[RMDB]
Annotation: The data come from the RNA Mapping Database (RMDB), library RFMREP. An RNA of 177 nucleotides, treated with 2A3 and DMS and read out base by base. The reactions ran in a buffer of 150 mM KOAc, 10 mM MgCl2 and 150 mM bicine (pH 8.5), at 24 C. Values cover nucleotides 27 to 126.
RNA sequence: GGGAACGACUCGAGUAGAGUCGAAAACGACACUCGCGUUCGCGCGAGUGUCGAAAAAGUUUCAAUCCUCUACGAGGCUAACGAGGUUUGCAACCAAAAAACCACGUCCUCUUCGGAGGACGUGGAACCUUGUUAUUAAGUUCGCUUAAUAACAAGGAAAAGAAACAACAACAACAAC
Reactivity to 2A3 in 0.01 (KOAc 150mM, MgCl2 10mM, bicine 150mM(pH8.5), 24C), signal-to-noise 1, nucleotides 027 to 126: c020g000a000c000a010c000u000c000g040c010g050u070u060c120g000c000g020c000g090a010g010u020g000u000c000g000a000a000a000a010a000g010u010u000u040c000a000a010u030c010c000u020c000u020a040c090g180a090g220g060c070u060a060a020c050g000a000g010g000u000u020u040g020c020a030a020c020c000a090a060a030a070a010a030c000c000a010c000g020u010c000c000u000c000u020u010c060g100g000a010g000g000a000c010g000u000g000g000a000a010
Reactivity to DMS in 0.01 (KOAc 150mM, MgCl2 10mM, bicine 150mM(pH8.5), 24C), signal-to-noise 2, nucleotides 027 to 126: c020g000a000c010a010c000u010c000g030c000g010u000u010c200g030c020g020c000g010a030g050u000g010u000c000g000a000a060a070a080a080g010u000u000u000c020a020a050u000c020c010u000c000u000a210c120g000a060g010g010c090u020a070a180c230g010a020g000g010u010u000u000g000c060a040a090c010c160a000a030a020a060a060a150c000c000a000c000g010u000c000c000u000c000u000u020c190g000g030a000g010g000a010c000g010u000g000g000a000a010